RNA sequence: GGGAACGACUCGAGUAGAGUCGAAAAGGGGUCUUCGGCAAGAGGACGACGACUGCUUGGAUUUAUAGGCUGAAGCCUCCACGGCCUAUUGUCAGCAGUCGGUCCUUGAUGACCCGAAGACGGAGGCACCCAAAAGACACACGUUCGCGUGUGUCAAACAACGAUGACAGUUCGCUGUCAUCGUUGUAAAAGAAACAACAACAACAAC
Reactivity to 2A3 in 0.01 (KOAc 150mM, MgCl2 10mM, bicine 150mM(pH8.5), 24C), signal-to-noise 1, nucleotides 027 to 156: g060g010g060g010u000c000u000u000c000g030g000c010a030a050g000a010g010g000a000c020g040a110c000g000a000c050u000g100c020u130u300g190g000a030u200u240u040a020u030a000g010g000c010u010g030a020a000g000c000c020u000c010c000a010c000g040g020c020c000u000a000u000u020g050u060c100a030g000c000a020g000u000c000g000g000u030c000c000u010u110g030a120u030g000a040c000c000c010g000a010a000g010a000c010g000g010a000g000g000c000a040c000c010c000a030a110a040a050g000a000c010a000c000a000c010g000u040u110c300g030c010g160u000g010u010g000u000c020a000a010
Description: The data come from the RNA Mapping Database (RMDB), library RNAMAK. Chemical mapping of a 207-nucleotide RNA with 2A3. 2A3 adducts were read by reverse transcription with SuperScript II with manganese. The 2A3 profile rests on 1,267 reads.